RNA sequence: GGGAACGACUCGAGUAGAGUCGAAAAUGACAGUCUUCCUGGGACUGGUUAUAGGUGCCAUUUUCUAUGAUCUAAAAAAUGAUCCUUCAGGAAUCCAGAACAGAGCCGGGGUGCUCUUCUUCCUGACCUAGUAGUGGUUUUUCGAAACCACUACUAGAAAAGAAACAACAACAACAAC
Reactivity to 2A3 in 0.01 (KOAc 150mM, MgCl2 10mM, bicine 150mM(pH8.5), 24C), signal-to-noise 2, nucleotides 027 to 126: u100g020a040c000a020g030u000c020u070u030c030c050u050g020g040g010a010c000u010g010g070u060u040a110u070a120g120g000u080g140c070c050a070u100u090u040u000c030u050a120u150g050a100u080c040u190a220a120a030a050a010a010u100g020a040u010c000c010u080u060c010a020g010g060a030a050u090c110c020a050g020a120a060c020a050g020a010g030c050c000g240g120g040g090u170g010c000u000c000u020u030c010u020u000c000c010u000g040a050c010
Reactivity to DMS in 0.01 (KOAc 150mM, MgCl2 10mM, bicine 150mM(pH8.5), 24C), signal-to-noise 3, nucleotides 027 to 126: u010g000a140c070a070g000u000c040u010u010c070c030u000g020g030g010a050c060u000g010g020u000u010a060u000a070g020g030u000g020c070c030a040u000u000u010u000c020u000a070u010g010a040u010c030u010a000a030a110a070a060a070u010g000a070u000c010c120u000u000c000a020g000g000a080a070u000c110c080a100g000a110a090c140a070g010a030g020c030c020g050g010g030g020u000g010c010u000c000u000u000c070u000u000c020c000u000g000a050c300

An RNA of 177 nucleotides, treated with 2A3 and DMS and read out base by base. It was measured as part of the RMDB library OK2TRN. The 2A3 profile rests on 2,227 reads. The RNA was probed in 150 mM KOAc, 10 mM MgCl2 and 150 mM bicine (pH 8.5) at 24 C. For 2A3 the reverse transcriptase was SuperScript II with manganese. For DMS, 2,717 sequencing reads were counted. 2A3 is a SHAPE reagent: it acylates the 2'-hydroxyl of flexible nucleotides of all four kinds.